[RMDB]
Chemical mapping of a 207-nucleotide RNA with DMS and 2A3. For DMS, 3,997 sequencing reads were counted.
RNA sequence: GGGAACGACUCGAGUAGAGUCGAAAAAGUUCGCGCUUCCGUGAAACGCGAAAAUCGGACGGUGGCUGCAAGUCGCAUCGCAAAACCGCGGAAAGUGGAGUUAGCGAGAGGAGGCUGGGUUUUGGCUAGAACACACGGUACUUCGGUACCGUGUGAACACGUUUGUAAUGUUCGCAUUACAAACGUGAAAAGAAACAACAACAACAAC
Reactivity to DMS in 0.01 (KOAc 150mM, MgCl2 10mM, bicine 150mM(pH8.5), 24C), signal-to-noise 2, nucleotides 027 to 156: a110g000u000u010c030g000c030g000c010u000u000c030c170g000u000g010a070a030a020c030g010c000g000a020a020a060a080u000c080g010g010a070c000g030g030u000g020g030c000u000g010c010a110a060g040u010c040g000c050a130u000c030g000c040a100a060a080a070c050c020g000c070g030g010a030a040a170g020u000g020g010a120g030u000u000a190g030c010g020a100g010a090g020g020a060g000g030c050u000g020g000g010u000u000u000u010g010g000c050u000a110g010a130a180c000a020c010a020c000g040g030u000a000c000u000u010c240g080g000u000a030c020c000g020u010g020u000g000a010a080
Reactivity to 2A3 in 0.01 (KOAc 150mM, MgCl2 10mM, bicine 150mM(pH8.5), 24C), signal-to-noise 3, nucleotides 027 to 156: a000g090u030u000c020g000c000g010c080u130u000c070c070g110u080g100a100a050a000c040g020c020g030a060a030a010a060u130c040g040g000a020c020g010g030u040g030g000c040u100g030c090a070a070g050u030c020g020c050a030u010c020g040c040a060a040a000a050c020c010g010c030g080g030a180a100a020g040u050g030g000a050g000u070u060a020g010c010g000a030g000a060g080g030a040g030g050c070u030g040g010g030u020u100u060u110g040g000c000u050a050g050a180a010c010a000c000a000c000g000g000u000a000c000u010u050c180g060g000u000a000c000c000g000u000g000u000g000a000a000
Reactivities are given for positions 27 through 156.
For DMS the reverse transcriptase was MarathonRT.
The RNA was probed in 150 mM KOAc, 10 mM MgCl2 and 150 mM bicine (pH 8.5) at 24 C.